[RMDB]
RNA sequence: GGGAACGACUCGAGUAGAGUCGAAAAUGACUGCAAGACUGACAAGUCGAGCAGAGACGAAAGUCGGUCAUAGUGAUCCGGUGGUCCCGCGUGGAAGGGCCAUCGCUCAACGGAUAAAAGGUACGCAUGGCAUAGCAGGAUUCGUCCUGCUAUGCCAAAAAGAAACAACAACAACAAC
Reactivity to DMS in 0.01 (KOAc 150mM, MgCl2 10mM, bicine 150mM(pH8.5), 24C), signal-to-noise 3, nucleotides 027 to 126: u020g000a160c000u000g000c020a060a300g000a030c000u020g020a130c300a100a070g010u000c000g000a300g010c040a070g010a110g010a010c030g020a090a060a170g000u020c020g020g030u000c010a090u000a180g020u020g020a100u000c130c000g010g030u000g030g010u000c010c010c130g000c170g000u010g020g010a100a060g010g000g000c020c000a010u000c040g000c140u000c050a070a130c120g000g010a020u040a050a020a070a050g010g020u000a040c070g020c090a130
Reactivity to 2A3 in 0.01 (KOAc 150mM, MgCl2 10mM, bicine 150mM(pH8.5), 24C), signal-to-noise 1, nucleotides 027 to 126: u010g010a000c030u010g000c010a000a150g000a030c010u020g010a030c010a150a010g000u000c020g010a020g060c030a010g020a030g000a010c030g000a060a020a000g010u010c000g020g070u000c050a020u090a090g110u000g030a050u000c030c020g020g010u010g000g060u010c040c010c020g080c060g100u200g110g070a070a070g000g020g030c000c000a010u040c010g020c000u040c060a070a100c040g080g030a020u040a100a100a020a010g080g010u110a020c000g030c070a030